[RMDB]
This 177-nucleotide RNA was probed chemically with DMS and 2A3. 2A3 adducts were read by reverse transcription with SuperScript II with manganese. The data come from the RNA Mapping Database (RMDB), library OK2TST.
RNA sequence: GGGAACGACUCGAGUAGAGUCGAAAAGAUGCCGAUGUACGCACUGCUCUUUCAGCGUCCGGAUGACGCGUUCGACCAUGCCGUUUUGCUGUGGGCAGUGCGGCGUGAUGAACUCCUGGCGCAGACAGCCCCUGCGUACUUUCGAGUACGCAGGGGCAAAAGAAACAACAACAACAAC
Reactivity to DMS in 0.01 (KOAc 150mM, MgCl2 10mM, bicine 150mM(pH8.5), 24C), signal-to-noise 1, nucleotides 027 to 126: g000a080u000g020c030c030g010a060u000g020u030a060c050g000c010a030c010u000g010c030u000c000u000u010u000c080a030g020c000g010u000c090c010g000g020a000u000g020a120c170g010c200g000u000u010c080g000a180c020c030a050u000g000c030c010g050u000u000u000u010g030c000u000g040u020g000g000g000c000a000g010u000g000c010g030g000c040g000u000g000a130u010g010a050a100c110u010c000c010u000g010g020c020g030c020a150g000a090c230a150
Reactivity to 2A3 in 0.01 (KOAc 150mM, MgCl2 10mM, bicine 150mM(pH8.5), 24C), signal-to-noise 1, nucleotides 027 to 126: g050a020u160g000c030c030g000a030u080g070u240a110c010g000c000a000c000u010g000c000u010c000u000u260u070c000a000g010c000g000u000c000c000g000g050a010u000g000a050c050g100c030g240u100u220c040g070a080c070c000a020u170g260c000c000g020u020u040u110u170g030c000u000g010u080g020g000g090c000a010g000u000g000c000g000g000c040g010u000g000a070u180g030a060a020c010u080c030c030u030g080g020c000g000c010a000g060a190c060a070